[RMDB]
RNA sequence: GGGAACGACUCGAGUAGAGUCGAAAAAAACGCGAACCUUUACAGCGGCGCCCGUGGAUACACUACUUGGUGGGAAAACGUGCGUGGACGACUUUAACAACAGGUUUUAUUCUUUGAACAUUGCGUGCCGAUAGAGUCCCUUCGGGGACUCUAUCGGAAAAGAAACAACAACAACAAC
Reactivity to 2A3 in 0.01 (KOAc 150mM, MgCl2 10mM, bicine 150mM(pH8.5), 24C), signal-to-noise 1, nucleotides 027 to 126: a000a000a000c000g000c000g000a070a150c000c000u000u000u000a000c000a130g000c010g100g000c000g000c000c000c000g100u110g100g000a180u250a190c000a000c100u190a060c080u280u300g000g000u070g000g020g150a000a050a000a200c140g000u000g000c000g000u040g030g070a000c000g110a100c080u080u180u200a150a060c210a030a000c030a110g000g010u010u040u040u050a070u250u000c060u100u000u030g060a100a000c000a260u150u130g000c000g000u170g060